[RMDB]
RNA sequence: GGGAACGACUCGAGUAGAGUCGAAAACACUAAGGAAUGCGUUUCGUUGACGCUGACCACAGACACAAACCAUAGUUUCGAUGGAAUUACAACUUGUGUCUUCUAUUUCGUUUGCAAACUCCAAGACAUACCUAUAUAACUAAUUGCAAAUACACUAUGAGUGAUUAAUAUUCGUAUUAAUCACUCAAAAAGAAACAACAACAACAAC
Reactivity to 2A3 in 0.01 (KOAc 150mM, MgCl2 10mM, bicine 150mM(pH8.5), 24C), signal-to-noise 9, nucleotides 027 to 156: c080a020c090u160a100a100g020g000a030a050u060g000c010g020u010u020u150c110g020u070u210g010a000c000g010c000u010g020a010c000c010a040c050a040g010a000c010a000c010a010a040a020c010c000a010u030a080g050u050u060u080c050g020a020u020g000g060a070a080u210u140a130c040a130a030c090u020u010g000u000g010u010c000u060u040c040u090a200u060u160u110c060g020u010u020u030g000c010a030a070a110c050u050c110c030a100a020g050a060c040a110u150a110c020c060u110a080u060a040u040a240a130c060u080a170a080u050u010g000c000a010a010a020u080a080c060a040c100u010a120
Reactivity to DMS in 0.01 (KOAc 150mM, MgCl2 10mM, bicine 150mM(pH8.5), 24C), signal-to-noise 5, nucleotides 027 to 156: c110a150c080u010a100a170g000g000a100a160u000g000c010g010u010u000u010c200g010u000u010g010a050c040g020c010u010g000a300c020c020a090c130a050g010a080c040a050c040a070a070a110c040c040a160u000a070g020u000u000u000c040g020a190u000g020g000a060a040u000u010a060c030a040a070c090u000u000g030u000g010u000c000u010u000c050u000a070u010u000u010c040g030u000u000u010g040c030a050a040a080c030u000c040c020a060a030g010a060c030a100u010a100c120c050u000a120u000a070u000a080a120c070u000a070a150u000u000g000c010a030a050a060u010a070c090a060c060u010a180